Record summary
The data come from the RNA Mapping Database (RMDB), library OK2TRN. The record gives the reactivity of an RNA of 177 nucleotides to DMS. Values cover nucleotides 27 to 126. For DMS the reverse transcriptase was MarathonRT.
RNA sequence: GGGAACGACUCGAGUAGAGUCGAAAAGCCUGAGCGUGUCGCGUCGUGCAUCGCGGGCUCCGGUGCCUGGUAGUGCAGUCCUGGUCCCUGCCGAGGUGGUAGGCACCAACGCAUCACCGGAUGGCUCCCAGCCUGAGCAUUUCGAUGCUCAGGCUGGAAAAGAAACAACAACAACAAC
Reactivity to DMS in 0.01 (KOAc 150mM, MgCl2 10mM, bicine 150mM(pH8.5), 24C), signal-to-noise 1, nucleotides 027 to 126: g000c000c000u010g000a140g020c050g010u000g020u040c050g000c110g020u010c150g010u000g010c060a050u010c120g020c040g000g000g000c010u010c060c080g030g030u000g010c090c020u010g030g030u000a100g010u010g000c000a090g010u010c130c160u010g010g050u000c250c000c000u000g010c000c010g000a210g010g010u000g010g010u000a020g010g000c180a010c000c020a010a070c100g000c010a100u000c000a020c060c010g000g000a120u010g010g000c040u000c010